RNA sequence: GGGAACGACUCGAGUAGAGUCGAAAAAUAGUUACCGCAUGCGCGGCACUGCUGGUGGGCAAGAUGGGCCGGUCGGCGGGCAUUGAUGUGAAGCGCGCGGCGGUGCAGCUCGGCCGCUCCAGUGUGGCCUUCGGUUUUAAUUCGUUAAAACCGAAGGAAAAGAAACAACAACAACAAC
Reactivity to DMS in 0.01 (KOAc 150mM, MgCl2 10mM, bicine 150mM(pH8.5), 24C), signal-to-noise 4, nucleotides 027 to 126: a100u010a120g000u010u010a060c010c010g020c040a090u010g030c100g020c000g030g000c050a080c010u000g010c050u000g010g010u000g000g000g030c030a080a120g010a120u010g000g000g000c020c000g020g010u000c030g010g020c000g010g010g010c080a080u000u000g000a140u020g020u010g010a120a220g010c010g000c020g020c020g010g000c010g010g020u000g000c040a110g000c070u010c070g000g010c020c010g000c010u000c120c090a070g010u000g020u010g010g000
Reactivity to 2A3 in 0.01 (KOAc 150mM, MgCl2 10mM, bicine 150mM(pH8.5), 24C), signal-to-noise 3, nucleotides 027 to 126: a000u150a020g070u080u140a060c010c020g040c050a080u210g050c030g020c020g170g000c030a020c110u040g020c030u010g030g010u140g070g020g030c020a030a020g130a200u110g020g190g020c010c000g120g040u060c030g050g020c000g040g000g000c050a050u090u290g130a190u190g170u080g200a100a020g040c020g040c000g000c000g050g030c010g010g000u010g000c010a000g040c010u060c060g030g000c000c000g010c020u050c030c010a040g030u000g010u050g070g020